[RMDB]
RNA sequence: GGGAACGACUCGAGUAGAGUCGAAAAGACGCUGAUGCGAUCGACUGUAAGAUAGAUAAACUGAGAAGACAGAUACGUACGGCAAGUAUCGUCGCCAGAAUUACAGUCGCAAAUUGCCGUACGAAGAGAUAUAGCCUGGGUUCGCCCAGGCUAUAUCAAAAGAAACAACAACAACAAC
Reactivity to DMS in 0.01 (KOAc 150mM, MgCl2 10mM, bicine 150mM(pH8.5), 24C), signal-to-noise 3, nucleotides 027 to 126: g000a110c010g010c020u000g000a120u030g000c040g020a170u020c010g010a020c000u000g020u020a000a000g010a080u030a200g000a120u040a060a070a300c030u010g000a090g030a190a090g020a040c000a060g000a090u030a000c000g020u000a000c040g000g000c010a030a030g000u000a010u000c050g020u000c010g010c050c020a120g020a090a040u010u000a000c000a010g010u000c020g000c200a110a060a050u000u000g000c000c000g000u000a080c130g000a120a040g000a170
Reactivity to 2A3 in 0.01 (KOAc 150mM, MgCl2 10mM, bicine 150mM(pH8.5), 24C), signal-to-noise 5, nucleotides 027 to 126: g050a020c020g000c040u160g070a140u290g060c030g070a110u050c010g000a000c000u000g000u020a010a020g070a170u240a030g110a100u190a120a210a060c030u040g010a020g040a230a030g010a050c040a020g060a070u040a080c020g060u020a000c010g020g000c000a020a020g050u030a030u070c070g000u000c010g010c040c010a010g060a070a000u030u000a000c000a000g000u000c010g000c040a070a080a030u040u020g000c000c000g020u000a000c040g030a090a040g040a000

An RNA of 177 nucleotides, treated with DMS and 2A3 and read out base by base. For 2A3 the reverse transcriptase was SuperScript II with manganese. Conditions: 150 mM KOAc, 10 mM MgCl2 and 150 mM bicine (pH 8.5), 24 C. It was measured as part of the RMDB library OK1LIB.